[RMDB]
RNA sequence: GGGAACGACUCGAGUAGAGUCGAAAAGAUAUGGAUCACAGCGAUGAGUAUGAGGUCGGAAACGACCUAUACGAGCUGUAUCCUAAGUCAAAACAACAGUGUUAGUGUUCGCACUAACACUGUUGAACAGUCUUAAAGGGUUCGCCCUUUAAGACUGAAAAGAAACAACAACAACAAC
Reactivity to 2A3 in 0.01 (KOAc 150mM, MgCl2 10mM, bicine 150mM(pH8.5), 24C), signal-to-noise 7, nucleotides 027 to 126: g020a010u070a020u130g010g010a010u070c190a030c010a020g010c020g280a300u210g060a130g090u020a020u120g300a040g000g000u010c010g010g010a050a080a040c010g000a010c010c000u010a000u000a000c000g020a020g000c000u000g000u000a000u000c000c000u010a130a010g070u020c040a030a000a090a180c010a000a010c000a000g010u000g000u000u000a010g000u010g080u100u080c300g050c130a000c000u000a000a000c000a000c000u000g000u000u000g000a000a000
Reactivity to DMS in 0.01 (KOAc 150mM, MgCl2 10mM, bicine 150mM(pH8.5), 24C), signal-to-noise 8, nucleotides 027 to 126: g000a040u010a300u000g000g000a010u000c170a010c000a000g010c000g010a120u010g020a220g010u000a010u000g000a020g020g020u000c000g020g000a080a100a230c000g000a000c000c000u000a010u000a000c000g010a100g000c010u000g010u000a030u000c000c000u010a050a100g000u000c040a050a070a120a250c010a010a010c000a000g010u000g010u000u000a000g010u000g010u010u010c220g030c010a010c000u000a010a010c000a000c000u000g000u000u000g000a050a200